[RMDB]
RNA sequence: GGGAACGACUCGAGUAGAGUCGAAAAAAAAAGAGCGUAAACGCGUCAUUGAGUGACGUGAAGAUCAUCCAAGUGUGCUGUCUACAGUCGUAGAUAGCGCACAAUACGCUGAUGAUCAUUCAAAAAAGAUCACUCUAUCGUUCGCGAUAGAGUGAUCAAAAGAAACAACAACAACAAC
Reactivity to DMS in 0.01 (KOAc 150mM, MgCl2 10mM, bicine 150mM(pH8.5), 24C), signal-to-noise 2, nucleotides 027 to 126: a010a040a040a040a050g000a030g000c040g020u000a070a120a090c120g020c010g020u000c000a040u000u000g020a070g040u000g030a010c000g030u000g000a120a040g030a010u000c000a000u000c000c180a100a110g000u000g020u000g000c000u000g000u000c000u000a000c000a160g000u000c220g000u010a020g010a000u000a010g010c000g000c010a000c000a040a020u000a090c080g020c060u010g010a010u010g000a000u000c000a100u020u000c070a010a050a020a040a100a050
Reactivity to 2A3 in 0.01 (KOAc 150mM, MgCl2 10mM, bicine 150mM(pH8.5), 24C), signal-to-noise 3, nucleotides 027 to 126: a000a000a000a000a000g150a030g010c080g070u080a070a100a000c030g010c000g000u000c000a020u040u220g150a080g190u020g000a000c010g000u020g040a060a020g000a020u000c000a000u000c010c040a110a080g010u010g000u000g000c000u000g000u000c000u000a060c080a260g180u290c140g000u100a000g000a000u010a010g000c000g010c010a000c000a000a000u060a010c050g000c050u030g000a010u000g000a000u000c020a050u140u180c110a050a080a030a040a000a020